Record summary:
Chemical mapping of a 177-nucleotide RNA with 2A3 and DMS. The data come from the RNA Mapping Database (RMDB), library OK2TST.

RNA sequence: GGGAACGACUCGAGUAGAGUCGAAAAGAAGACCGUGCGGAAGAAGCUGCUGAAAUGGCUAUCUCUUCUCCGCUGCUGGAAGAUAUCGACCUGUCUGGCGCGCGCGGCGUGCUGGUUAACAUCACGGUAGUACUAGGACUUUCGAGUCCUAGUACUAAAAAGAAACAACAACAACAAC
Reactivity to 2A3 in 0.01 (KOAc 150mM, MgCl2 10mM, bicine 150mM(pH8.5), 24C), signal-to-noise 4, nucleotides 027 to 126: g080a040a010g030a030c000c010g020u020g000c020g000g040a140a110g010a000a010g120c070u050g010c020u070g130a140a130a160u300g050g000c030u050a050u160c100u000c000u040u000c010u000c000c020g020c010u050g020c060u110g020g000a070a030g030a080u070a040u150c040g060a090c000c020u030g060u060c020u030g010g000c020g000c020g020c000g030c050g190g000c010g010u000g010c020u010g000g020u040u100a060a030c030a080u100c050a010c070g080g030
Reactivity to DMS in 0.01 (KOAc 150mM, MgCl2 10mM, bicine 150mM(pH8.5), 24C), signal-to-noise 5, nucleotides 027 to 126: g000a200a110g010a110c010c020g030u000g020c040g010g000a040a060g010a040a040g010c300u000g010c030u010g010a100a090a050u010g020g020c010u000a110u000c160u000c020u000u000c010u000c030c030g020c030u010g010c040u000g000g010a080a060g010a100u000a080u010c100g010a120c050c020u000g020u000c020u000g010g020c020g010c030g010c070g020c080g020g010c060g040u000g000c040u000g000g010u010u010a090a130c070a050u000c060a050c090g010g000
The DMS profile rests on 5,811 reads.
Values are in units of 0.01, from 0 to 300, in steps of 10.
Reactivities are given for positions 27 through 126.
The reactions ran in a buffer of 150 mM KOAc, 10 mM MgCl2 and 150 mM bicine (pH 8.5), at 24 C.